[RMDB]
RNA sequence: GGGAACGACUCGAGUAGAGUCGAAAAAAUUAGCCGGGUAUGGUGGCGCACGCCUGUAAUCCCAGCUACUCAGGAGGCUGAGGCAGGAGAAUUGCUUGAACCCGGGAGGCAGAGAUUGCAGUGAGCCCAAACAAUGCUUGUUCGCAAGCAUUGUUUGAAAAGAAACAACAACAACAAC
Reactivity to DMS in 0.01 (KOAc 150mM, MgCl2 10mM, bicine 150mM(pH8.5), 24C), signal-to-noise 3, nucleotides 027 to 126: a050a090u010u010a080g020c030c020g020g010g000u010a060u000g010g030u000g020g020c050g020c100a070c130g030c030c020u000g010u000a090a070u010c010c010c000a050g000c030u000a060c040u000c080a070g000g010a150g010g000c020u010g000a040g000g000c000a030g000g000a060g020a070a060u010u000g000c030u010u000g010a070a060c050c030c030g000g010g000a100g000g010c030a030g010a070g010a060u010u000g010c030a060g010u000g010a080g000c030c040
Reactivity to 2A3 in 0.01 (KOAc 150mM, MgCl2 10mM, bicine 150mM(pH8.5), 24C), signal-to-noise 1, nucleotides 027 to 126: a030a010u150u040a070g050c040c010g040g040g020u120a060u200g080g070u040g040g000c030g010c020a030c080g030c010c000u040g040u120a010a040u040c020c010c000a000g000c010u070a100c030u030c120a070g160g000a030g040g150c030u010g020a010g010g010c010a010g020g020a090g050a070a170u150u060g030c000u080u050g080a080a070c000c000c000g010g010g000a050g050g000c030a020g000a000g000a200u080u110g040c010a030g060u010g080a070g000c000c010